Chemical mapping of a 207-nucleotide RNA with 2A3. The RNA was probed in 150 mM KOAc, 10 mM MgCl2 and 150 mM bicine (pH 8.5) at 24 C. For 2A3, 614 sequencing reads were counted.
[RMDB]
RNA sequence: GGGAACGACUCGAGUAGAGUCGAAAAGCAGCAGGCUUACGAGCCUGCUGCAAUAAAAGCCAGGACGGUCACCUCGGGGGUGGUGACAAGUGUGAUCACUUGGGUGGUGGCUGUGUUUGCGUCUCUCCCAGGAAUCAUCUUUACCAGAUCUUCGAAAGUAAAUUAUCCAGUUCGCUGGAUAAUUUACAAAAGAAACAACAACAACAAC
Reactivity to 2A3 in 0.01 (KOAc 150mM, MgCl2 10mM, bicine 150mM(pH8.5), 24C), signal-to-noise 1, nucleotides 027 to 156: g020c010a010g030c010a000g010g000c020u060u100a100c260g050a000g020c000c020u000g000c030u000g020c010a000a000u010a040a010a000a010g000c010c010a000g050g040a050c050g000g000u000c000a000c020c000u040c050g080g020g000g070g040u060g000g050u030g010a000c040a060a140g200u140g020u020g230a080u070c020a000c040u020u050g210g000g010u050g000g040u050g000g000c010u030g020u010g050u030u080u040g030c080g060u030c000u010c000u030c110c000c000a010g110g000a060a040u100c020a040u040c100u090u080u040a080c030c010a040g010a170u030c030u050u080c060g030a020a040a070